About this RNA:
Chemical mapping of a 177-nucleotide RNA with DMS and 2A3.
RNA sequence: GGGAACGACUCGAGUAGAGUCGAAAACUGAAAUUGACGUAAUGCGUGAUGCAUUGCAAAAAGCCGGUUUUGAAGAGCCGAUGCUGCAAAACUUUGGUAGCAGCCAUGACAUCAUGGUCCGUAUGCCCAACUUGGUGGUCUUCGGACCACCAAGUUGAAAAGAAACAACAACAACAAC
Reactivity to DMS in 0.01 (KOAc 150mM, MgCl2 10mM, bicine 150mM(pH8.5), 24C), signal-to-noise 1, nucleotides 027 to 126: c020u000g000a070a140a080u010u000g000a190c120g010u000a010a020u000g000c000g020u020g010a120u000g030c010a000u000u000g000c040a030a090a060a210a050g000c130c000g020g000u000u000u010u020g070a140a120g010a100g030c030c080g080a190u000g010c030u010g000c050a060a060a140a040c200u000u000u030g000g000u000a040g040c190a080g000c000c090a040u000g000a170c170a090u000c020a010u000g010g010u000c060c070g000u000a040u010g020c010c030
Reactivity to 2A3 in 0.01 (KOAc 150mM, MgCl2 10mM, bicine 150mM(pH8.5), 24C), signal-to-noise 1, nucleotides 027 to 126: c060u080g070a020a000a240u170u080g020a010c030g000u000a040a010u050g040c030g030u090g130a030u210g000c030a020u010u010g010c000a010a150a100a000a000g000c000c000g030g150u050u040u110u110g300a280a220g030a010g000c100c130g010a040u120g020c010u040g000c020a040a040a100a270c090u140u110u260g090g000u000a040g040c050a000g000c000c000a020u050g000a030c030a120u250c010a010u100g010g000u070c030c000g020u080a120u110g040c000c010
The reactions ran in a buffer of 150 mM KOAc, 10 mM MgCl2 and 150 mM bicine (pH 8.5), at 24 C.